[RMDB]
RNA sequence: GGGAACGACUCGAGUAGAGUCGAAAAAAGAUAUGGACUAUAUUAGUAGCAUAUUGUCAGCUUAGAGGGAUCGGAAACGAUCCCGAUUGAGCUUGGAUUUAUAUGCGAAAGUAUAGUCCUAAGUCAAGAAUCAUGAGAAGUUCGCUUCUCAUGAUUCAAAAGAAACAACAACAACAAC
Reactivity to 2A3 in 0.01 (KOAc 150mM, MgCl2 10mM, bicine 150mM(pH8.5), 24C), signal-to-noise 1, nucleotides 027 to 126: a000a000g080a030u110a070u110g000g000a010c000u000a000u000a020u070u010a010g020u010a000g010c000a020u000a010u030u040g020u010c000a010g010c020u040u010a010g040a050g090g010g000a020u030c010g040g040a060a030a060c020g000a030u000c000c000c000g010a010u020u080g020a010g000c010u030u120g110g000a020u140u300u100a010u020a000u000g000c030g000a000a000a020g000u000a000u000a010g010u010c000c010u000a000a000g000u010c010a020a090
Reactivity to DMS in 0.01 (KOAc 150mM, MgCl2 10mM, bicine 150mM(pH8.5), 24C), signal-to-noise 2, nucleotides 027 to 126: a120a060g010a080u000a300u000g000g010a000c000u000a000u000a000u000u000a080g010u000a220g000c000a000u000a000u000u000g030u000c030a020g000c000u000u000a020g020a300g000g000g020a030u000c010g000g000a150a090a180c020g030a000u000c000c000c000g000a040u000u000g010a010g020c000u000u000g050g010a000u000u000u000a000u010a010u000g000c010g040a160a140a300g000u010a000u000a010g000u000c000c000u000a020a040g010u010c090a130a210
Chemical mapping of a 177-nucleotide RNA with 2A3 and DMS.
Source: RMDB library TTRDES, as collected in RNAgym.
For DMS, 1,770 sequencing reads were counted.
The reactions ran in a buffer of 150 mM KOAc, 10 mM MgCl2 and 150 mM bicine (pH 8.5), at 24 C.